[RMDB]
The record gives the reactivity of an RNA of 207 nucleotides to 2A3. The RNA was probed in 150 mM KOAc, 10 mM MgCl2 and 150 mM bicine (pH 8.5) at 24 C. Values cover nucleotides 27 to 156. It was measured as part of the RMDB library OK3TST.
RNA sequence: GGGAACGACUCGAGUAGAGUCGAAAACGAUCUGUUCGCAGAUCGAGCUACGGAGACGUAGCAAAGCGAGCGAGGGCACGGGCGCUCGCACUACCGGAACUACAGCCAUAUCCACGUGUGCUAGGAUAUGGCCGUGCCCAAAGAAACAGCACACGAACACUCACUCACCAUUCGUGGUGAGUGAGUGAAAAGAAACAACAACAACAAC
Reactivity to 2A3 in 0.01 (KOAc 150mM, MgCl2 10mM, bicine 150mM(pH8.5), 24C), signal-to-noise 2, nucleotides 027 to 156: c050g000a000u020c010u010g050u090u110c240g060c120a000g000a000u010c000g000a050g000c000u010a000c010g020g030a080g030a110c010g000u020a010g000c000a000a110a000g020c000g000a000g040c020g010a020g000g000g000c020a000c030g090g030g030c010g050c000u000c000g000c020a010c000u080a040c000c010g090g090a110a060c080u190a050c080a060g000c000c000a000u000a000u000c000c000a070c200g010u020g010u010g010c010u040a050g000g000a000u000a000u000g020g000c030c000g010u010g000c020c000c000a090a230a040g170a040a120a010c090a040g000c020a000c000a000c010g010a030a000